Background: This 207-nucleotide RNA was probed chemically with DMS and 2A3. The 2A3 profile rests on 4,345 reads. High DMS reactivity at an A or C suggests that its Watson-Crick edge is free. It was measured as part of the RMDB library M2RFPK.

RNA sequence: GGGAACGACUCGAGUAGAGUCGAAAAAUACACCAGCAGUAGGACUCAGCGACCGUCACAACAAGGUUGUGCUGGUAUCCGACGGUCGCAUAGCCCUGUCUUGCAGGUUGCCUUGCACUGACGUGCCACACCAUUUACAGAUUCGUCUGUAAAUGAAUAUACAGAUUAUCUUCGGAUAAUCUGUAUAAAAAGAAACAACAACAACAAC
Reactivity to DMS in 0.01 (KOAc 150mM, MgCl2 10mM, bicine 150mM(pH8.5), 24C), signal-to-noise 3, nucleotides 027 to 156: a160u010a120c060a210c020c010a110g050c050a060g000u000a030g010g030a020c010u000c090a260g020c030g010a020c020c000g020u000c020a180c050a090a050c070a050a100g020g020u000u000g030u000g030c010u010g010g020u000a060u010c090c030g020a050c020g020g010u000c000g060c010a050u000a020g000c000c010c010u010g010u000c020u000u000g010c010a100g010g020u000u000g020c020c110u000u010g000c040a050c030u000g020a130c190g000u000g010c010c060a080c050a130c090c000a000u000u000u000a010c000a010g020a080u000u000c300g040u000c010u010g000u000a010a010a000u000g000a060a130
Reactivity to 2A3 in 0.01 (KOAc 150mM, MgCl2 10mM, bicine 150mM(pH8.5), 24C), signal-to-noise 5, nucleotides 027 to 156: a000u160a010c100a000c010c000a010g000c000a000g020u060a020g000g040a020c020u020c100a020g010c000g000a000c020c000g000u020c020a030c020a110a120c040a160a100g090g050u090u060g080u160g080c070u100g080g050u040a090u060c030c060g000a000c000g000g000u000c010g000c000a010u020a000g000c000c010c010u020g050u130c050u060u150g000c020a040g000g020u040u100g060c020c010u030u080g010c010a040c040u220g110a050c090g020u040g010c030c010a080c000a020c040c000a010u010u000u000a000c000a000g010a020u020u110c130g090u010c090u000g010u000a000a000a000u000g000a020a000